[RMDB]
RNA sequence: GGGAACGACUCGAGUAGAGUCGAAAAGAUAUGGAGCUCCUACCCACCCUCACUUUGACCUUUGAUCAUGCUUCGGAAACGAAGCAUGGGAGGUCAAGGUGAGGAGGGAGCUCCUAAGUCAAAGUCGAAUACCAGCCUUCGGGCUGGUAUUCGACAAUCGUAGCAAUAGGUUCGCCUAUUGCUACGAAAAAGAAACAACAACAACAAC
Reactivity to 2A3 in 0.01 (KOAc 150mM, MgCl2 10mM, bicine 150mM(pH8.5), 24C), signal-to-noise 1, nucleotides 027 to 156: g040a040u200a150u300g020g000a000g020c000u000c020c020u060a300c040c020c010a020c010c000c000u000c000a010c010u040u010u010g000a000c000c020u210u220u100g050a120u180c000a000u000g010c000u000u010c020g030g000a040a070a060c000g000a000a020g030c000a000u000g000g000g010a000g000g000u000c000a000a000g000g010u000g000a000g000g000a000g010g000g030a000g010c000u010c000c000u000a010a000g070u030c050a150a040a040g010u000c000g000a000a000u000a010c010c020a030g000c000c000u100u170c300g040g010g000c000u020g050g000u000a000u000u000c000g000a000c010a000a030